[RMDB]
RNA sequence: GGGAACGACUCGAGUAGAGUCGAAAAACCACAACCCUUAAGUUAGCGCUUAUGGGCUAGAAGCCCCGGAGAUACCCCUGCUUCGUCAGGCAGUCUGUACCGCGUACAGCCUGAAACUCCCUAAACCUGAUAUACGAAUGUUCGCAUUCGUAUAUCAAAAAGAAACAACAACAACAAC
Reactivity to 2A3 in 0.01 (KOAc 150mM, MgCl2 10mM, bicine 150mM(pH8.5), 24C), signal-to-noise 9, nucleotides 027 to 126: a010c050c020a070c030a030a060c000c000c000u020u020a020a010g010u030u130a050g040c020g010c070u030u030a030u080g000g000g020c010u080a090g040a200a020g050c010c020c020c020g050g010a040g020a070u180a160c030c030c000c000u010g010c020u100u110c030g130u150c010a000g010g020c000a000g020u000c010u010g010u010a020c010c140g110c010g040u010a010c010a000g000c000c000u000g010a050a020a020c020u040c000c000c000u110a090a090a060c010c030
Reactivity to DMS in 0.01 (KOAc 150mM, MgCl2 10mM, bicine 150mM(pH8.5), 24C), signal-to-noise 6, nucleotides 027 to 126: a110c050c030a140c130a100a200c000c010c010u000u000a010a030g010u000u010a150g010c280g010c010u000u010a040u010g000g000g010c070u010a080g010a180a200g010c040c010c020c080g000g000a050g000a100u020a100c100c090c010c020u010g000c020u010u010c090g020u020c040a040g000g010c010a020g000u010c020u010g010u000a020c020c190g000c210g010u000a020c030a040g010c030c010u010g000a070a110a100c090u000c000c010c050u020a060a070a110c210c110
Description:
An RNA of 177 nucleotides, treated with 2A3 and DMS and read out base by base. High 2A3 reactivity points to a flexible backbone, as in loops and unpaired stretches. 2A3 adducts were read by reverse transcription with SuperScript II with manganese. The reactions ran in a buffer of 150 mM KOAc, 10 mM MgCl2 and 150 mM bicine (pH 8.5), at 24 C. The data come from the RNA Mapping Database (RMDB), libraries RFM100 and RFMREP.